[RMDB]
RNA sequence: GGGAACGACUCGAGUAGAGUCGAAAACGGAGAUCUUCGACCAGACCAUGCCGCUGGGCAAGCACUGGAGGGUCGGCCUCCGCGCCGGUGGGUAGGGGUGCCUCGGUGGCGGGCAGGGCUGCGGGCAGUAGAUACUAACUUUCGAGUUAGUAUCUACAAAAGAAACAACAACAACAAC
Reactivity to 2A3 in 0.01 (KOAc 150mM, MgCl2 10mM, bicine 150mM(pH8.5), 24C), signal-to-noise 9, nucleotides 027 to 126: c020g030g000a030g010a060u060c060u170u110c120g030a020c010c000a040g100a100c010c010a050u080g030c020c030g110c130u180g020g120g030c080a050a020g030c020a030c140u070g020g020a040g040g040g020u060c010g020g010c000c010u050c030c010g000c040g000c010c010g050g040u130g000g020g030u100a080g030g020g010g040u120g020c000c020u060c060g060g040u080g030g050c090g000g000g020c060a060g030g020g000c070u140g020c060g020g000g000c020a030
Reactivity to DMS in 0.01 (KOAc 150mM, MgCl2 10mM, bicine 150mM(pH8.5), 24C), signal-to-noise 6, nucleotides 027 to 126: c050g010g000a050g000a060u000c070u010u010c030g010a090c010c010a090g010a130c040c040a120u010g020c030c060g010c120u010g020g010g020c090a130a070g010c080a090c130u000g010g020a300g000g010g010u000c030g010g010c220c010u010c040c060g000c100g000c030c020g000g000u010g010g000g010u000a100g000g000g000g010u000g010c040c020u010c070g010g020u000g010g000c050g000g000g000c110a080g000g000g010c070u000g000c090g000g000g000c110a100
This 177-nucleotide RNA was probed chemically with 2A3 and DMS.
The reactions ran in a buffer of 150 mM KOAc, 10 mM MgCl2 and 150 mM bicine (pH 8.5), at 24 C.
The DMS profile rests on 14,357 reads.